[RMDB]
RNA sequence: GGGAACGACUCGAGUAGAGUCGAAAAUUUUGUUGAAGGACAAACGACAACAACUUUUUACGAUAUAUCGGCUGGACGAAUUCCACUAGAAGUUAAAACAUUACGCAUUUUACAUUUCGUAAGUGGAUAACCCUGCCCUAUUCGUAGGGCAGGGUUAAAAAGAAACAACAACAACAAC
Reactivity to DMS in 0.01 (KOAc 150mM, MgCl2 10mM, bicine 150mM(pH8.5), 24C), signal-to-noise 2, nucleotides 027 to 126: u000u010u000u040g020u000u000g000a080a150g000g000a100c300a060a000a250c010g000a300c020a000a020c040a010a050c010u000u000u000u000u050a220c000g000a070u010a110u040a040u000c020g040g000c120u010g080g000a110c020g000a120a040u010u000c020c000a000c010u000a160g000a060a040g000u010u000a000a040a000a010c060a030u010u050a200c300g040c220a150u000u000u000u000a000c190a000u020u010u000c010g000u010a050a010g000u020g000g060a050
Reactivity to 2A3 in 0.01 (KOAc 150mM, MgCl2 10mM, bicine 150mM(pH8.5), 24C), signal-to-noise 2, nucleotides 027 to 126: u000u000u000u000g030u040u000g010a070a050g060g020a040c060a070a200a100c030g070a010c000a020a020c000a000a010c050u010u020u000u080u120a100c060g040a050u100a010u020a070u100c040g120g000c080u070g000g050a040c000g030a050a120u050u030c000c000a070c000u020a020g000a080a000g070u030u100a000a160a000a000c070a020u230u300a100c060g060c070a010u000u050u010u000a180c180a110u060u030u030c020g000u070a040a120g100u090g000g000a000